[RMDB]
RNA sequence: GGGAACGACUCGAGUAGAGUCGAAAACUCAAUCUGACUCAACGCGCGCACCUCACCAGGCCCGGACGCGCGGAGGACCGACAGCCGGGCGCGCUUUCGCGAUCGCGCGGGCGGUGGUGCAUGGCCGCCAGUUAACAGUGUUCGCACUGUUAACUGGAAAAGAAACAACAACAACAAC
Reactivity to 2A3 in 0.01 (KOAc 150mM, MgCl2 10mM, bicine 150mM(pH8.5), 24C), signal-to-noise 7, nucleotides 027 to 126: c020u020c020a040a150u070c080u130g090a090c030u050c130a090a030c040g000c000g020c010g010c040a030c010c010u080c030a100c030c030a040g140g000c010c010c010g070g040a050c030g020c000g000c010g040g010a030g010g070a070c030c020g050a050c010a030g050c020c000g040g040g000c020g020c010g000c000u030u050u060c020g020c020g080a160u110c070g010c010g000c000g050g020g000c000g010g030u020g000g010u020g000c030a090u070g050g010c010c020g010
Reactivity to DMS in 0.01 (KOAc 150mM, MgCl2 10mM, bicine 150mM(pH8.5), 24C), signal-to-noise 3, nucleotides 027 to 126: c030u000c040a130a110u030c100u040g000a150c050u000c050a120a130c110g000c040g020c080g000c040a040c020c020u020c090a080c110c090a070g010g010c020c000c000g000g000a170c080g030c060g010c030g020g000a070g020g020a100c060c060g000a050c110a100g000c030c020g020g010g000c030g020c110g020c050u000u000u020c040g010c020g010a090u010c100g010c070g020c020g000g000g000c010g010g040u000g000g030u010g000c050a040u000g010g000c070c050g000